Notes:
Source: RMDB library OK3TST, as collected in RNAgym. Structure probing data (2A3) for a 207-nucleotide construct. Reactivities are given for positions 27 through 156. For 2A3, 336 sequencing reads were counted. The reactions ran in a buffer of 150 mM KOAc, 10 mM MgCl2 and 150 mM bicine (pH 8.5), at 24 C.
[RMDB]
RNA sequence: GGGAACGACUCGAGUAGAGUCGAAAAGGCAAUAUACUGAAACUGGUCACACACCGGGUAUUGGUAAAUGUGAUUUAAAUCAAUUGAUUGGUAGUAAAAAUUUAGCUUACUUCACUGGGCAAGAUGAUCAAACACCUAAAGGUUAUCAAUAUGUUAGCCCUGAAGAACCUUUCGAGGUUCUUCAGGGAAAAGAAACAACAACAACAAC
Reactivity to 2A3 in 0.01 (KOAc 150mM, MgCl2 10mM, bicine 150mM(pH8.5), 24C), signal-to-noise 1, nucleotides 027 to 156: g030g000c000a090a000u090a010u040a150c040u130g050a170a030a000c040u090g030g040u000c000a020c000a000c000a000c010c000g160g000g090u180a090u250u120g030g000u020a050a110a030u040g030u010g000a000u000u030u130a000a090a020u050c060a090a090u070u070g000a000u100u000g060g090u050a090g020u040a000a000a000a170a170u020u130u090a030g060c030u000u060a000c000u000u050c030a010c040u030g000g000g150c010a030a030g120a010u130g030a030u030c010a060a110a000c030a010c060c010u220a060a060a060g060g020u010u010a010u100c000a170a060u070a040u130g110u090u180a060g040